[RMDB]
RNA sequence: GGGAACGACUCGAGUAGAGUCGAAAAAUAAAAAACCAAUGCCCUUCGGGGCUCCUUGGUGAUUCAUGAUAACUUAACGAAUCGCAUGGCCUUGCGCCGGCGAUGGUUCAUUCAAAUUUCUGCCCUACGAAUCAAGGGAAUUCGUUCCCUUGAUUCGAAAAGAAACAACAACAACAAC
Reactivity to 2A3 in 0.01 (KOAc 150mM, MgCl2 10mM, bicine 150mM(pH8.5), 24C), signal-to-noise 6, nucleotides 027 to 126: a010u260a030a060a000a000a000a000c020c000a000a010u060g000c010c000c000u010u040c190g020g000g000g000c000u050c000c010u000u030g000g030u010g040a080u060u110c080a040u110g090a060u020a160a080c050u090u100a090a040c090g080a110a040u020c010g000c040a170u140g010g000c010c010u140u230g070c140g000c020c000g000g000c010g020a020u010g030g000u020u030c020a020u060u030c040a040a120a180u040u080u000c030u060g050c010c000c010u030a030
Reactivity to DMS in 0.01 (KOAc 150mM, MgCl2 10mM, bicine 150mM(pH8.5), 24C), signal-to-noise 3, nucleotides 027 to 126: a080u020a020a050a070a110a080a010c010c000a010a030u020g010c000c000c000u010u060c210g020g010g000g000c030u000c090c080u000u020g010g000u010g000a130u000u010c140a090u010g000a050u020a070a070c120u040u010a060a090c180g000a100a010u000c000g010c000a020u010g030g010c000c000u030u010g010c100g050c000c010g000g000c010g000a010u000g000g020u000u000c160a060u000u000c100a030a050a190u010u010u020c050u010g010c020c010c010u020a160
An RNA of 177 nucleotides, treated with 2A3 and DMS and read out base by base. Reactivities are rounded to 0.1 and cut off at 0 and 3. 2A3 adducts were read by reverse transcription with SuperScript II with manganese. Reactivities are given for positions 27 through 126.